The record gives the reactivity of an RNA of 177 nucleotides to 2A3. The reactions ran in a buffer of 150 mM KOAc, 10 mM MgCl2 and 150 mM bicine (pH 8.5), at 24 C.
[RMDB]
RNA sequence: GGGAACGACUCGAGUAGAGUCGAAAAGAUAUGGAUGUUAGGCUUCUUGGAUUUAUCGUGUUAUGCGACUAUUCGGAAACGAAUAGAGAACGCAUAACACGAUUGUCAGAAGCUAACAUCCUAAGUCGCUGUCAGAUAGCUUCGGCUAUCUGACAGCAAAAGAAACAACAACAACAAC
Reactivity to 2A3 in 0.01 (KOAc 150mM, MgCl2 10mM, bicine 150mM(pH8.5), 24C), signal-to-noise 1, nucleotides 027 to 126: g130a040u190a100u300g070g000a000u040g000u100u000a230g300g230c010u050u000c030u210u280g130g000a100u290u300u240a020u100c000g000u000g000u010u000a000u000g000c070g190a240c030u000a030u000u010c020g010g010a040a080a100c000g000a000a020u010a000g080a030g060a230a060c020g000c000a000u000a000a010c000a010c000g000a000u010u000g010u020c030a000g030a010a010g040c030u000a010a010c000a000u050c000c010u000a080a000g000u160c090